Source information:
This 177-nucleotide RNA was probed chemically with DMS and 2A3. Values cover nucleotides 27 to 126. The RNA was probed in 150 mM KOAc, 10 mM MgCl2 and 150 mM bicine (pH 8.5) at 24 C.
RNA sequence: GGGAACGACUCGAGUAGAGUCGAAAACUUUGGUAGGGUUACCAGCGACUGAUACAGCUAAAGAAGCUGCAGUUGACUUACCGGUUGAGGAUUGACCUGUAAAACUAAAAAUGAUUCCGGCAAAUUCUACUAAAUCAGCUUUCGAGCUGAUUUAGUAAAAAGAAACAACAACAACAAC
Reactivity to DMS in 0.01 (KOAc 150mM, MgCl2 10mM, bicine 150mM(pH8.5), 24C), signal-to-noise 4, nucleotides 027 to 126: c040u000u020u000g010g000u000a020g000g020g000u010u010a170c040c030a130g020c020g010a010c010u000g000a290u060a300c020a000g000c010u010a060a160a150g010a140a070g000c000u000g010c020a030g020u000u000g010a100c040u020u000a060c030c020g000g000u010u000g010a080g000g010a090u020u010g010a110c040c020u000g010u010a060a080a090a090c110u030a020a080a080a100a100u010g000a140u000u010c010c020g010g000c090a040a080a090u020u020c060
Reactivity to 2A3 in 0.01 (KOAc 150mM, MgCl2 10mM, bicine 150mM(pH8.5), 24C), signal-to-noise 5, nucleotides 027 to 126: c050u120u070u090g060g000u030a050g050g050g060u060u080a080c030c000a030g030c010g020a000c010u020g020a090u150a300c020a000g000c000u050a100a130a180g230a190a070g030c000u020g020c000a000g000u000u040g050a070c010u030u060a000c000c000g010g000u010u060g080a060g000g040a090u040u090g110a150c000c040u010g040u100a020a060a060a140c070u110a110a060a100a050a020u100g050a080u130u040c010c000g000g000c050a100a040a120u100u030c050